[RMDB]
RNA sequence: GGGAACGACUCGAGUAGAGUCGAAAAAGCAACGAGUGUGUGUGGGACGUUUUAUCCCAAGCUCUGAGUAGAGCACGCGCUCACACAGACCGCGAGCGAGCAUCAGCAGAGCGCAAACGCUGGUAAAGCUCCAUCAGGAAUUCGUUCCUGAUGGAGCAAAAGAAACAACAACAACAAC
Reactivity to DMS in 0.01 (KOAc 150mM, MgCl2 10mM, bicine 150mM(pH8.5), 24C), signal-to-noise 2, nucleotides 027 to 126: a100g010c050a120a050c040g000a170g040u000g010u000g030u000g030u000g010g000g000a060c000g000u000u000u000u000a140u020c070c000c000a050a070g030c000u000c000u020g040a180g020u000a050g010a040g020c010a070c130g000c060g000c010u000c000a040c040a020c070a050g020a020c050c080g020c080g020a120g000c030g000a140g000c070a020u000c020a050g000c000a070g000a070g000c080g020c170a080a100a080c130g000c030u000g000g030u000a090a070a150
Reactivity to 2A3 in 0.01 (KOAc 150mM, MgCl2 10mM, bicine 150mM(pH8.5), 24C), signal-to-noise 1, nucleotides 027 to 126: a010g030c040a050a080c010g060a090g050u130g000u000g000u000g010u020g080g000g000a030c000g020u000u050u030u160a130u100c040c000c000a010a000g000c000u000c000u070g300a220g160u300a030g210a000g010c030a000c030g030c000g000c000u010c000a020c000a000c000a000g020a020c020c050g080c050g040a000g020c020g000a010g080c020a070u030c000a000g060c010a040g050a040g140c070g000c080a100a020a050c020g010c060u030g010g060u110a080a090a000

This 177-nucleotide RNA was probed chemically with DMS and 2A3. The data come from the RNA Mapping Database (RMDB), library M2PK90. Reactivities are rounded to 0.1 and cut off at 0 and 3. DMS adducts were read by reverse transcription with MarathonRT.